[RMDB]
RNA sequence: GGGAACGACUCGAGUAGAGUCGAAAACUUCUCCAUUUCCUCUUUCAAGAGAAUGUGAGCAUUGAAGGAUUCGGACAUAGCCUUCAUGCAUGCUAGAGUAUCAUGGAGGCCCGUGAACUACUUGUAAGUCCUCAACUACAUUCGUGUAGUUGAGGACAAAAGAAACAACAACAACAAC
Reactivity to 2A3 in 0.01 (KOAc 150mM, MgCl2 10mM, bicine 150mM(pH8.5), 24C), signal-to-noise 5, nucleotides 027 to 126: c010u040u020c000u000c010c000a000u040u060u110c070c010u040c030u040u290u130c140a140a010g020a020g010a050a030u040g090u100g020a040g010c110a130u090u230g080a020a010g020g010a030u070u050c030g030g000a020c070a130u200a020g010c000c000u000u000c000a000u000g000c010a000u020g000c010u110a140g010a100g240u030a010u060c000a010u000g020g000a000g000g000c000c000c010g010u040g010a060a060c030u100a020c020u050u050g040u130a090a100
Reactivity to DMS in 0.01 (KOAc 150mM, MgCl2 10mM, bicine 150mM(pH8.5), 24C), signal-to-noise 3, nucleotides 027 to 126: c100u000u010c000u000c000c010a010u000u010u000c140c000u000c010u000u050u050c220a080a020g000a070g000a040a060u000g020u080g020a090g000c300a150u000u000g010a050a030g000g000a300u000u020c030g010g000a090c170a090u000a150g000c020c020u010u010c000a000u000g000c300a040u010g020c000u030a050g010a200g020u060a010u020c040a020u020g010g000a040g010g020c010c050c070g030u010g010a030a110c050u000a110c040u010u000g000u010a040a170